Structure probing data (2A3 and DMS) for a 207-nucleotide construct.

RNA sequence: GGGAACGACUCGAGUAGAGUCGAAAAAGGUGAACAAGAAAAUGACCGAAGAAACACACCCAGACGAUGACAGCUAUAUUGUGCGUGUCAAGGCUGUGGUUAUGACCAGAGAUGACUCCAGCGGGGGAUGGUUCCCACAGGAAGGAGGCGGGAUCAAUCAUUUACUGCUGUUCGCAGCAGUAAAUGAAAAAGAAACAACAACAACAAC
Reactivity to 2A3 in 0.01 (KOAc 150mM, MgCl2 10mM, bicine 150mM(pH8.5), 24C), signal-to-noise 3, nucleotides 027 to 156: a020g060g000u050g030a070a010c040a050a050g090a090a150a050a060u110g000a030c020c040g030a030a020g050a040a100a010c060a010c000a010c020c010c000a010g030a050c040g120a120u190g010a000c020a000g000c000u050a050u040a150u300u220g080u090g100c110g080u070g000u000c010a000a010g050g000c010u040g040u200g050g030u060u090a060u220g050a050c040c030a010g020a000g020a080u090g050a080c040u020c000c030a030g050c050g020g020g010g010g010a010u030g040g000u040u020c010c020c000a020c020a010g030g000a030a040g010g000a010g000g010c040g020g030g010a020u050c040a000a030
Reactivity to DMS in 0.01 (KOAc 150mM, MgCl2 10mM, bicine 150mM(pH8.5), 24C), signal-to-noise 2, nucleotides 027 to 156: a090g030g020u000g020a070a120c030a130a100g010a090a130a140a130u000g020a110c030c010g000a100a080g020a110a120a060c030a130c060a080c000c010c000a100g000a040c040g010a140u010g000a080c010a070g000c000u000a130u000a130u000u000g030u020g040c000g000u000g030u000c030a070a130g020g030c000u010g000u000g020g020u000u010a050u000g010a050c010c020a120g010a130g010a080u000g020a050c020u000c030c040a050g030c100g010g020g040g020g000a030u010g020g010u000u010c010c000c010a090c070a050g000g010a060a080g000g020a040g000g000c050g010g000g020a110u000c040a050a170

Source information: The reactions ran in a buffer of 150 mM KOAc, 10 mM MgCl2 and 150 mM bicine (pH 8.5), at 24 C.